[RMDB]
Source information:
This 207-nucleotide RNA was probed chemically with DMS and 2A3. The DMS profile rests on 1,841 reads. The 2A3 profile rests on 969 reads. 2A3 adducts were read by reverse transcription with SuperScript II with manganese.

RNA sequence: GGGAACGACUCGAGUAGAGUCGAAAAAGCAUUUAGCCUGAUUACUCUUUAAAUAAAAUCAGGCAAUAGAGAGAAACUCGAGAGGUGAAAACCCCACAGCAUUCUGAAAUGUAUUUGGGAGUAAUCUAUGACUAUUGGGUCUUCGGACCCAAUAGAACAUUAUUCGUAUGUUCGCAUACGAAUAAUGAAAAGAAACAACAACAACAAC
Reactivity to DMS in 0.01 (KOAc 150mM, MgCl2 10mM, bicine 150mM(pH8.5), 24C), signal-to-noise 1, nucleotides 027 to 156: a190g020c070a130u010u010u000a170g020c000c010u000g000a020u000u000a050c100u020c060u020u000u000a070a120a130u000a060a050a020a140u000c000a020g010g000c020a020a070u000a130g000a110g050a240g000a160a110a040c030u000c040g010a110g010a140g020g020u050g000a140a090a160a090c040c010c000c030a170c110a090g020c030a010u010u000c110u000g030a130a120a080u010g000u000a060u000u000u000g000g010g010a100g020u010a020a090u010c040u000a070u000g040a170c000u000a020u000u010g010g000g050u000c010u000u000c300g030g010a000c000c000c000a000a000u000a000g010a110a150
Reactivity to 2A3 in 0.01 (KOAc 150mM, MgCl2 10mM, bicine 150mM(pH8.5), 24C), signal-to-noise 2, nucleotides 027 to 156: a000g070c050a030u170u180u220a020g000c010c000u010g010a010u020u130a130c030u060c110u200u180u250a150a170a200u180a040a170a060a020u010c020a000g000g000c000a010a000u030a000g010a000g010a000g000a090a100a000c000u020c020g040a070g010a060g090g040u030g020a030a040a010a040c010c000c020c000a030c030a010g030c010a030u080u120c070u260g110a130a140a040u090g020u040a120u080u080u010g040g000g000a080g060u030a030a030u000c060u070a090u230g050a090c000u000a000u010u020g000g000g000u000c000u010u010c110g080g020a000c000c000c000a000a000u000a000g000a010a000